[RMDB]
RNA sequence: GGGAACGACUCGAGUAGAGUCGAAAAGUUGCUAGAAUAAGCGUGAAUCAUAGUACACCGAGGGUCCACAUCUUCGUGUUGCUGUUCGCAGCAAUAUUCGGAUAACCCUCUCGGUGUCUCCAUUGAGCUUAGGGAAACCGUUCGCGGUUUCCCUAAGAAAAGAAACAACAACAACAAC
Reactivity to DMS in 0.01 (KOAc 150mM, MgCl2 10mM, bicine 150mM(pH8.5), 24C), signal-to-noise 2, nucleotides 027 to 126: g010u000u000g000c010u000a030g000a070a090u040a020a070g030c040g000u000g010a110a160u010c050a050u010a040g000u010a010c020a010c010c010g020a010g030g000g000u000c140c140a190c300a060u000c000u010u000c170g010u000g020u000u000g000c000u000g000u030u040c170g000c000a020g010c030a020a010u000a000u010u000c150g000g010a020u000a110a160c220c130c010u030c020u010c040g010g010u000g030u000c020u020c090c110a100u000u020g000a070g000
Reactivity to 2A3 in 0.01 (KOAc 150mM, MgCl2 10mM, bicine 150mM(pH8.5), 24C), signal-to-noise 3, nucleotides 027 to 126: g100u090u130g030c040u060a050g100a300a120u210a200a000g050c040g080u060g050a010a060u040c040a040u040a110g000u030a020c000a000c010c000g000a000g000g010g020u050c030c040a080c030a070u010c020u000u020c010g020u010g000u010u010g000c020u000g020u030u110c200g030c100a000g000c000a010a010u030a030u060u050c020g020g000a000u000a020a020c020c000c000u080c000u010c010g000g000u000g020u010c000u000c010c010a050u010u150g020a020g020